Chemical mapping of a 207-nucleotide RNA with 2A3 and DMS. For 2A3, 736 sequencing reads were counted. The reactions ran in a buffer of 150 mM KOAc, 10 mM MgCl2 and 150 mM bicine (pH 8.5), at 24 C. Values are in units of 0.01, from 0 to 300, in steps of 10. The data come from the RNA Mapping Database (RMDB), library OK3TST. DMS adducts were read by reverse transcription with MarathonRT.

RNA sequence: GGGAACGACUCGAGUAGAGUCGAAAACUGGAACACCCACAGGGCCGCCGCGAAGUCGGAGAACGGCGCCCAGUGCUCCAAAUUAUUGGAGCUGAUGGCCCACGAGGAGAACAUGAACAGUCUUCGAACGGGACCGGACAUUAUGCGGUGUAUGGGAUAAAGCGAACUUGUUCGCAAGUUCGCUUUAAAAAGAAACAACAACAACAAC
Reactivity to 2A3 in 0.01 (KOAc 150mM, MgCl2 10mM, bicine 150mM(pH8.5), 24C), signal-to-noise 2, nucleotides 027 to 156: c040u010g040g070a130a000c030a010c040c020c020a060c020a050g050g040g000c270c020g000c000c000g010c030g130a120a130g170u300c150g070g000a130g010a240a000c000g020g000c000g020c000c000c000a000g040u010g030c000u030c010c000a050a050a110u300u300a070u130u110g000g000a000g000c000u010g000a030u060g000g000c000c000c030a000c040g020a030g000g000a020g040a000a040c050a200u170g070a070a040c040a100g070u000c000u000u000c000g040a060a050c030g000g000g020a120c000c000g000g000a000c000a010u170u300a120u190g050c170g010g000u000g030u020a090u300g010g000g000a000
Reactivity to DMS in 0.01 (KOAc 150mM, MgCl2 10mM, bicine 150mM(pH8.5), 24C), signal-to-noise 2, nucleotides 027 to 156: c060u020g040g000a100a170c010a030c000c000c030a060c070a150g020g000g060c020c060g030c000c010g010c010g010a120a190g030u010c070g000g060a120g020a300a020c000g030g050c000g000c010c010c010a140g000u000g030c010u010c010c000a070a110a250u000u010a040u010u000g040g030a060g010c010u010g020a150u010g040g000c030c010c000a140c060g010a300g000g000a030g000a030a060c030a120u000g000a110a180c090a190g000u000c000u000u000c020g020a120a140c040g040g070g000a010c000c000g030g040a200c130a120u000u000a070u030g010c060g030g000u000g040u000a050u000g000g020g000a260